[RMDB]
An RNA of 207 nucleotides, treated with DMS and 2A3 and read out base by base. Reactivities are rounded to 0.1 and cut off at 0 and 3. Conditions: 150 mM KOAc, 10 mM MgCl2 and 150 mM bicine (pH 8.5), 24 C.
RNA sequence: GGGAACGACUCGAGUAGAGUCGAAAACGGAUACGCCUUCUUUACCGUUAUCAAGGAAGGUACUCGGCCAUGCUAAGGGAAGCAUUAUUCCUUAGGCGCAUGUCGCCGCCAGCAUGGUGUGAGGGGAAAAAGUAUGCUGGGUUCGCCCAGCAUACAAGCACAAACACAAGUUCGCUUGUGUUUGUGCAAAAGAAACAACAACAACAAC
Reactivity to DMS in 0.01 (KOAc 150mM, MgCl2 10mM, bicine 150mM(pH8.5), 24C), signal-to-noise 1, nucleotides 027 to 156: c050g020g030a080u000a050c090g030c000c000u000u010c010u010u010u000a200c070c140g000u010u020a130u000c100a080a070g010g000a030a030g000g030u000a010c010u000c020g000g000c000c000a070u000g010c010u010a130a170g020g020g000a050a090g000c260a170u000u000a100u000u000c000c010u000u010a120g030g020c010g030c020a160u000g050u010c070g000c000c010g000c100c050a040g030c010a010u000g010g030u010g000u010g000a050g000g030g000g000a010a060a110a060a140g100u000a010u000g010c040u000g010g050g000u020u010c300g000c000c010c000a040g000c000a000u000a000c000a050a110
Reactivity to 2A3 in 0.01 (KOAc 150mM, MgCl2 10mM, bicine 150mM(pH8.5), 24C), signal-to-noise 5, nucleotides 027 to 156: c030g030g000a040u080a070c070g050c010c000u010u020c000u000u060u080a090c040c020g220u130u110a120u190c070a030a000g030g000a000a000g000g010u050a050c010u010c000g020g000c010c000a000u000g000c000u070a070a090g000g010g010a020a020g040c060a170u140u090a120u250u000c000c010u050u080a050g000g010c000g010c040a100u290g100u300c000g000c020c000g000c010c030a010g000c010a000u000g010g040u070g110u150g030a040g000g030g040g070a060a140a000a000a000g000u000a000u000g000c000u000g000g010g010u030u010c100g120c030c000c000a000g000c000a000u000a000c000a000a010